[RMDB]
RNA sequence: GGGAACGACUCGAGUAGAGUCGAAAAAGUGGCGUCGGUGGGCGGUGUGGUGAAAGAGUAUCAGGUGGUUAUCGAUCCCCAGCGCCUGGCGCAGUAUGGCAUCAGUCUCGCCGAAGUAAAAAGCGCGUGCUAGCACUCACUUCGGUGAGUGCUAGCAAAAAGAAACAACAACAACAAC
Reactivity to DMS in 0.01 (KOAc 150mM, MgCl2 10mM, bicine 150mM(pH8.5), 24C), signal-to-noise 1, nucleotides 027 to 126: a130g020u000g000g000c040g040u000c030g000g040u000g030g000g040c040g030g020u000g010u030g030g060u000g000a020a080a230g020a090g000u000a050u010c050a100g010g030u000g010g000u030u000a080u000c040g000a230u000c000c000c010c050a120g000c030g000c020c030u020g000g010c030g000c000a150g010u000a030u020g040g020c040a130u010c050a130g000u020c000u000c030g000c010c010g010a040a070g000u040a050a020a050a150a100g010c030g000c070g010